RNA sequence: GGGAACGACUCGAGUAGAGUCGAAAACGACGGGUCUUCGGACCCGUCGAAAUAAUGCGUAGCUCGCGCUACGCAGGCAUCGAGUAGGACGAGCCACCUACAAAAGCUUCGAGUUCGCUCGAAGCAAGAUAAGGGGUUGGUUCGCCAACCCCUUAUCAAAAGAAACAACAACAACAAC
Reactivity to DMS in 0.01 (KOAc 150mM, MgCl2 10mM, bicine 150mM(pH8.5), 24C), signal-to-noise 1, nucleotides 027 to 126: c030g010a010c010g000g030g020u000c000u000u000c150g030g000a010c020c000c010g010u000c000g000a000a020a030u000a110a100u000g000c000g020u000a000g000c000u000c300g000c300g000c000u010a000c000g000c000a020g020g000c100a090u000c070g000a090g000u000a010g010g020a110c040g000a080g000c030c030a110c000c000u000a050c050a070a070a040a070g000c000u000u000c000g000a000g000u000u010c240g010c000u010c000g000a000a010g010c000a020a020
Reactivity to 2A3 in 0.01 (KOAc 150mM, MgCl2 10mM, bicine 150mM(pH8.5), 24C), signal-to-noise 1, nucleotides 027 to 126: c020g000a000c000g000g060g000u000c000u030u060c150g110g030a010c060c000c020g000u010c000g000a000a000a000u110a010a050u060g030c000g000u010a000g010c020u050c130g180c000g000c090u020a000c010g000c000a000g040g000c000a110u210c060g010a040g040u010a020g010g120a110c040g030a020g100c000c020a030c020c020u010a030c000a020a130a000a030g000c000u010u000c010g010a010g030u030u080c160g050c050u000c000g000a010a000g000c000a000a020

Structure probing data (DMS and 2A3) for a 177-nucleotide construct. The reactions ran in a buffer of 150 mM KOAc, 10 mM MgCl2 and 150 mM bicine (pH 8.5), at 24 C. DMS adducts were read by reverse transcription with MarathonRT. For DMS, 1,138 sequencing reads were counted.